Structure probing data (DMS) for a 177-nucleotide construct.
Reactivities are rounded to 0.1 and cut off at 0 and 3.
The RNA was probed in 150 mM KOAc, 10 mM MgCl2 and 150 mM bicine (pH 8.5) at 24 C.
DMS adducts were read by reverse transcription with MarathonRT.
The DMS profile rests on 654 reads.

RNA sequence: GGGAACGACUCGAGUAGAGUCGAAAAUAUGACAGGGCAUGAUACUGACGAGACCUUGGACAUCAAAGGCUGGAGCAGGACUUCCUCCUAGGGAACAUCCUCAGAUAUGUAGAUGUCACCGUGUGGGUAGCUGGUGGAGGUUCGCCUCCACCAGCUAAAAAGAAACAACAACAACAAC
Reactivity to DMS in 0.01 (KOAc 150mM, MgCl2 10mM, bicine 150mM(pH8.5), 24C), signal-to-noise 1, nucleotides 027 to 126: u010a080u000g020a100c090a100g040g030g000c010a050u000g010a150u000a120c060u010g040a060c120g010a140g000a140c010c010u050u000g000g000a070c100a050u000c060a050a120a060g020g030c070u000g000g000a120g000c190a130g010g000a130c150u000u030c030c000u020c010c170u010a130g020g020g020a040a070c090a110u000c000c030u010c040a040g010a170u000a050u010g000u000a090g000a080u000g010u000c050a230c030c020g000u010g070u000g010g000g110